[RMDB]
RNA sequence: GGGAACGACUCGAGUAGAGUCGAAAACUGGCGUCGUUCGCGACGCCAGAAAUACUAACACCGAAGCUUAGAUGGCCGACACUUCCCUUGGGCGCAAAACAAAAACCGGUCUGUUCGCAGACCGGAAGAAUGUAUAGGUCUUCGGACCUAUACAUUCAAAAGAAACAACAACAACAAC
Reactivity to 2A3 in 0.01 (KOAc 150mM, MgCl2 10mM, bicine 150mM(pH8.5), 24C), signal-to-noise 3, nucleotides 027 to 126: c000u000g030g000c000g000u000c010g020u070u050c130g000c030g100a000c000g050c000c020a000g000a000a000a010u070a010c020u020a100a020c020a030c060c080g100a090a020g010c040u120u100a040g030a170u200g150g000c020c010g040a000c030a030c240u030u020c020c010c000u020u110g040g010g020c060g000c040a100a070a010a050c050a010a090a000a010a010c000c000g000g020u000c010u010g080u030u060c200g000c080a000g000a000c000c010g010g010a000a000
Reactivity to DMS in 0.01 (KOAc 150mM, MgCl2 10mM, bicine 150mM(pH8.5), 24C), signal-to-noise 3, nucleotides 027 to 126: c000u000g000g000c000g010u010c000g030u000u010c190g030c000g000a000c000g010c000c000a000g010a010a040a080u000a120c110u020a070a070c060a100c140c090g000a050a100g020c130u000u000a080g000a140u000g000g010c010c010g000a130c050a070c150u000u000c010c000c000u000u010g010g000g010c020g010c140a030a040a080a060c100a060a080a070a080a050c020c000g010g000u000c000u000g010u010u010c180g000c000a000g000a010c000c000g000g000a010a030